This 177-nucleotide RNA was probed chemically with 2A3. The reactions ran in a buffer of 150 mM KOAc, 10 mM MgCl2 and 150 mM bicine (pH 8.5), at 24 C.
[RMDB]
RNA sequence: GGGAACGACUCGAGUAGAGUCGAAAAGAAGAAAACAAAACAAAACAAAAACAAAACAAAACAAAAACAAAAGAAAAGGACCGCCCAUCGGGGCUAAGGCCAUACGGACAGCCGGGUCCACUGCCGAGCAGAUCUAGGACUUCGGUCCUGGAUCUGCAAAAGAAACAACAACAACAAC
Reactivity to 2A3 in 0.01 (KOAc 150mM, MgCl2 10mM, bicine 150mM(pH8.5), 24C), signal-to-noise 1, nucleotides 027 to 126: g050a030a030g080a010a060a010a000c050a050a120a000a000c030a010a060a030a010c100a010a080a070a040a090c040a020a130a040a000c000a070a030a010a000c080a020a110a000a040a010c030a040a250a030a030g070a010a070a000a000g010g020a000c000c000g000c020c010c000a180u300c150g110g000g060g030c030u110a040a090g000g000c000c000a030u040a110c010g000g000a000c000a020g000c000c030g000g000g000u000c000c000a010c000u030g000c000c000g030a000